[RMDB]
RNA sequence: GGGAACGACUCGAGUAGAGUCGAAAAAGCCGCAGUACAUGCCCAAUCCGAUCGACACCAACAACGUGCAUCUGGACAACGACCUCAACUCGCUGGUCCAGAAGUUCAGCGAGCACUACCACGAUGACACUUUUACCCCAUUCGUGGGGUAAAAGUGAAAAGAAACAACAACAACAAC
Reactivity to 2A3 in 0.01 (KOAc 150mM, MgCl2 10mM, bicine 150mM(pH8.5), 24C), signal-to-noise 1, nucleotides 027 to 126: a000g150c060c030g000c010a000g030u020a020c010a080u050g020c050c000c000a020a040u030c000c020g060a060u060c050g020a020c010a010c030c030a050a050c010a060a020c080g030u020g000c020a030u000c010u050g000g010a030c000a000a010c050g030a010c000c060u150c030a000a050c000u010c020g030c050u050g100g030u000c000c010a060g010a080a010g020u080u050c030a020g000c010g030a020g000c030a000c020u060a040c010c030a020c050g130a070u100g100a040
Reactivity to DMS in 0.01 (KOAc 150mM, MgCl2 10mM, bicine 150mM(pH8.5), 24C), signal-to-noise 3, nucleotides 027 to 126: a040g060c020c010g020c050a060g000u000a090c080a050u010g000c040c030c030a080a100u010c060c020g020a090u000c060g000a140c080a070c030c060a090a090c120a050a070c150g000u000g000c010a160u000c020u000g010g000a030c050a020a090c090g020a030c110c070u010c210a060a090c300u010c010g010c020u000g010g000u010c010c050a060g000a040a150g010u010u000c060a040g000c060g010a040g000c040a040c070u000a100c040c090a100c150g000a060u010g030a190